[RMDB]
RNA sequence: GGGAACGACUCGAGUAGAGUCGAAAAGCUCUAGGAGACUAGAGCGAUACGUUAGAGAGCCCGUGGCAUGACUAACGGAUAGCCAGGUACGAGGUUGCCAGAGGACAUAGCUAUAGCUAUGUCCAAAGACGUAUCAUACCUUCGGGUAUGAUACGUCAAAAGAAACAACAACAACAAC
Reactivity to DMS in 0.01 (KOAc 150mM, MgCl2 10mM, bicine 150mM(pH8.5), 24C), signal-to-noise 2, nucleotides 027 to 126: g020c000u000c000u000a000g000g010a180g010a140c000u000a000g010a010g010c000g000a060u020a020c030g000u000u000a020g010a170g010a230g000c020c020c170g030u000g000g040c040a110u000g000a110c010u010a010a070c050g030g000a100u000a090g030c040c030a100g000g010u040a070c120g040a060g010g000u010u000g020c020c020a160g000a230g000g000a010c000a000u000a010g000c000u030a130u060a090g030c000u000a020u000g000u000c000c000a010a050a070
Reactivity to 2A3 in 0.01 (KOAc 150mM, MgCl2 10mM, bicine 150mM(pH8.5), 24C), signal-to-noise 2, nucleotides 027 to 126: g000c000u000c000u000a010g010g040a100g030a060c000u000a000g000a000g000c000g000a010u010a010c010g000u010u020a010g030a010g030a000g090c000c000c000g040u070g050g000c080a080u070g000a200c000u010a040a030c030g020g000a110u110a010g050c040c070a010g000g050u030a030c060g020a090g080g040u100u000g080c020c000a030g010a070g040g000a000c000a000u000a000g010c000u060a030u070a300g010c000u000a000u010g000u000c020c000a000a000a000
The data come from the RNA Mapping Database (RMDB), library OK1LIB. Structure probing data (DMS and 2A3) for a 177-nucleotide construct. For DMS, 3,302 sequencing reads were counted. DMS (dimethyl sulfate) methylates the pairing face of unpaired adenines and cytosines. The RNA was probed in 150 mM KOAc, 10 mM MgCl2 and 150 mM bicine (pH 8.5) at 24 C. For DMS the reverse transcriptase was MarathonRT.